[RMDB]
RNA sequence: GGGAACGACUCGAGUAGAGUCGAAAACCUUCUCUCGUCUUCCUCGGUCAACCUCUUAAGUUCCUCUUCUUCUUCCUUGCUGAGGUUCUUCCCUCCCCCGGCUAGCUGCUUCUUCUUGUUCUCGAGGUAAACAGCCGCUUCGGCGGCUGUAAAAGAAACAACAACAACAAC
Reactivity to DMS in 0.01 (KOAc 150mM, MgCl2 10mM, bicine 150mM(pH8.5), 24C), signal-to-noise 2, nucleotides 027 to 129: c050c040u000u000c020u010c030u010c000g020u020c050u010u030c060c050u010c050g030g030u010c170a090a090c070c080u020c030u000u150a050a070g020u060u000c050c020u010c040u040u020c030u030u030c040u030u010c000c020u000u000g030c080u050g010a080g040g020u000u050c110u030u000c030c040c050u000c040c010c000c040c000g030g030c040u000a060g020c040u040g000c040u070u000c010u000u000c040u010u070g010u010u010c050u010c050g030a100g000g000u000a050a030

This 170-nucleotide RNA was probed chemically with DMS. The DMS profile rests on 12,386 reads. The RNA was probed in 150 mM KOAc, 10 mM MgCl2 and 150 mM bicine (pH 8.5) at 24 C. Reactivities are given for positions 27 through 129.